[RMDB]
RNA sequence: GGGAACGACUCGAGUAGAGUCGAAAAGUAGGACUAUCAGACAUGCAAAGCGCAGUGAAUCAGGCGAUAAGCCUUAUUUGAGUCCAAAUGAUUUACUGAAUGAACAACAGCAAGGGCCUAAAAUGGCCUGAGUGCUUGUGCCAGAGGCACCAUCAGCCUGAGGAUGUUGUUUCGACAACAUCCUCAGAAAAGAAACAACAACAACAAC
Reactivity to 2A3 in 0.01 (KOAc 150mM, MgCl2 10mM, bicine 150mM(pH8.5), 24C), signal-to-noise 2, nucleotides 027 to 156: g110u140a050g000g000a050c070u050a100u180c070a040g070a120c040a140u080g040c040a000a070a200g070c090g000c040a020g000u000g060a000a010u020c050a010g000g010c000g020a090u080a210a000g000c000c010u000u000a020u020u030u070g070a040g010u010c000c000a000a060a050u100g020a030u000u000u220a050c010u060g030a030a100u080g010a050a030c020a050a000c000a040g000c030a060a040g020g010g020c000c000u210a300a170a110a080u180g000g000c000c000u040g000a000g030u040g000c000u000u010g030u000g000c000c000a080g040a090g120g010c010a010c000c000a040u060c020a000g110c010
Reactivity to DMS in 0.01 (KOAc 150mM, MgCl2 10mM, bicine 150mM(pH8.5), 24C), signal-to-noise 1, nucleotides 027 to 156: g000u000a040g050g020a160c030u000a110u020c050a170g030a150c110a060u000g020c040a140a060a160g010c110g060c010a060g020u010g010a040a000u000c020a050g000g030c050g050a080u000a070a210g030c010c020u000u000a110u000u000u010g020a090g000u000c000c030a080a070a130u000g020a050u000u000u020a020c030u000g010a030a160u000g000a100a070c030a040a060c060a030g040c020a050a300g040g020g040c010c030u010a010a050a110a150u000g000g040c030c000u000g050a100g000u000g020c050u000u000g000u000g000c000c040a120g030a100g000g020c050a030c010c050a110u000c030a090g020c040